[RMDB]
RNA sequence: GGGAACGACUCGAGUAGAGUCGAAAACAACGGGGCUAGCCGUCAGGUGUUCCACCCCCCGAGAGGGAAGGAGUGAGGCUUAUCCCGGGGAACUCGGCGAAUCGUCCCCACAUACCAGGUUCCCCAGCACGUCUAAAGAGUUCGCUCUUUAGACGUGAAAAGAAACAACAACAACAAC
Reactivity to DMS in 0.01 (KOAc 150mM, MgCl2 10mM, bicine 150mM(pH8.5), 24C), signal-to-noise 2, nucleotides 027 to 126: c090a080a110c080g020g000g000g050c110u010a080g010c040c020g020u010c100a110g000g020u030g010u020u000c030c040a150c080c080c020c020c020c050g000a160g000a180g010g000g000a090a110g010g000a070g000u000g030a240g000g040c000u020u010a090u000c000c000c000g040g000g030g000a060a030c020u010c040g010g000c000g010a050a060u010c080g000u010c000c000c010c010a170c080a050u000a080c070c060a060g000g000u000u000c000c000c000c100a130g000
About this RNA:
Structure probing data (DMS) for a 177-nucleotide construct. DMS adducts were read by reverse transcription with MarathonRT. The RNA was probed in 150 mM KOAc, 10 mM MgCl2 and 150 mM bicine (pH 8.5) at 24 C.